[RMDB]
RNA sequence: GGGAACGACUCGAGUAGAGUCGAAAAUUGCGCCUCCGAUUCGCCGUCGGCAUUUCCCCAGCAGCCAUGACCUACCAGGCUGCGGUGCGACUCGCCGCACAGGUCAUCCCUCAUCGGGCGCGUCCUGGAUAGGGCUAUACUUUCGAGUAUAGCCCAACAUAAACAUUAAGUUCGCUUAAUGUUUAUGAAAAGAAACAACAACAACAAC
Reactivity to DMS in 0.01 (KOAc 150mM, MgCl2 10mM, bicine 150mM(pH8.5), 24C), signal-to-noise 4, nucleotides 027 to 156: u000u010g020c020g000c020c010u000c010c020g010a080u000u000c040g020c020c050g000u000c030g010g000c040a140u000u000u000c010c020c010c010a130g010c010a040g010c020c020a160u000g010a170c120c080u000a160c110c060a180g010g010c030u000g020c000g000g020u000g010c060g010a080c090u000c050g030c020c000g040c130a070c050a050g010g010u000c100a070u000c010c030c010u010c090a120u010c040g010g000g020c030g030c020g020u010c030c020u000g020g010a170u010a090g020g020g040c000u000a010u000a010c000u010u000u000c260g020a070g030u000a010u000a010g010c010c000c000a000a020
Reactivity to 2A3 in 0.01 (KOAc 150mM, MgCl2 10mM, bicine 150mM(pH8.5), 24C), signal-to-noise 4, nucleotides 027 to 156: u100u120g000c010g000c010c020u160c050c030g020a060u080u100c070g010c030c020g000u030c010g000g010c030a020u050u050u040c010c010c000c010a050g000c010a000g010c000c030a170u100g060a180c030c060u140a130c140c010a030g020g000c000u000g000c000g000g010u040g020c070g020a010c010u010c080g010c000c000g060c020a020c010a070g000g010u100c040a150u120c070c010c020u140c020a070u070c040g000g010g000c010g000c010g000u070c000c010u010g070g030a120u100a190g010g000g000c000u000a000u000a000c000u070u100u120c240g080a000g010u000a000u000a010g000c030c000c000a000a000